The record gives the reactivity of an RNA of 177 nucleotides to DMS and 2A3.
RNA sequence: GGGAACGACUCGAGUAGAGUCGAAAAGAUAUGGAUCAUGGUAGACAUGCUUGGUUUCGGAAACGAAAUGCAAGCAACAGCUACGUGAUCCUAAGUCAAAACCCAAAACAGUUCGCUGUUUUGGGAAGAAAUUCAAUCUGUUCGCAGAUUGAAUUUCAAAAGAAACAACAACAACAAC
Reactivity to DMS in 0.01 (KOAc 150mM, MgCl2 10mM, bicine 150mM(pH8.5), 24C), signal-to-noise 3, nucleotides 027 to 126: g010a020u010a130u010g000g000a010u000c010a020u000g010g030u000a010g000a090c170a110u010g010c000u010u000g000g000u000u000u000c000g010g010a060a020a060c000g010a010a000a010u000g010c000a010a010g020c000a070a070c220a120g000c000u000a000c000g020u000g000a010u020c000c000u010a010a070g000u010c000a110a110a140a170c010c000c000a010a010a010a000c000a010g010u000u000c240g030c010u000g000u000u000u000u000g000g000g000a030a050
Reactivity to 2A3 in 0.01 (KOAc 150mM, MgCl2 10mM, bicine 150mM(pH8.5), 24C), signal-to-noise 4, nucleotides 027 to 126: g010a000u000a010u070g000g010a000u010c010a000u100g300g030u060a000g030a080c100a300u300g020c000u000u000g000g000u000u010u010c000g010g010a030a030a010c010g060a020a020a000u300g300c020a000a000g000c020a040a050c090a020g000c000u010a000c000g010u000g000a000u000c000c000u000a000a010g010u000c010a010a060a140a300c000c010c000a010a000a000a000c030a010g110u210u220c240g030c210u000g000u000u010u010u000g020g020g010a010a020
The DMS profile rests on 3,820 reads.